[RMDB]
RNA sequence: GGGAACGACUCGAGUAGAGUCGAAAACCUAUCCAAAAUGAGAUCCCAUCUUGCACACUGUGCUAAUUUGAGAUUCUCAUGCCUACUACUUGGAGAGAUCUGGACUAGAAGUCAGGGCAUCUGACUCAAUACAUUCGUCAGUUCGCUGACGAAUGAAGACUGAUCACCUCUUCGGAGGUGAUCAGUCAAAAGAAACAACAACAACAAC
Reactivity to 2A3 in 0.01 (KOAc 150mM, MgCl2 10mM, bicine 150mM(pH8.5), 24C), signal-to-noise 1, nucleotides 027 to 156: c000c010u050a060u120c000c010a070a030a000a070u010g020a010g010a000u000c010c010c000a000u070c020u040u030g000c020a010c050a120c130u280g000u000g000c050u120a040a130u000u000u040g030a020g000a000u200u040c010u020c010a030u040g000c020c000u150a140c070u010a090c030u020u020g020g000a010g000a000g000a110u050c090u150g060g000a060c120u080a100g030a100a000g130u030c000a000g040g000g150c010a060u130c090u030g010a000c000u000c020a030a030u040a050c000a020u020u000c000g000u000c000a020g020u050u090c150g000c080u000g000a000c000g000a000a000u010g000a020a000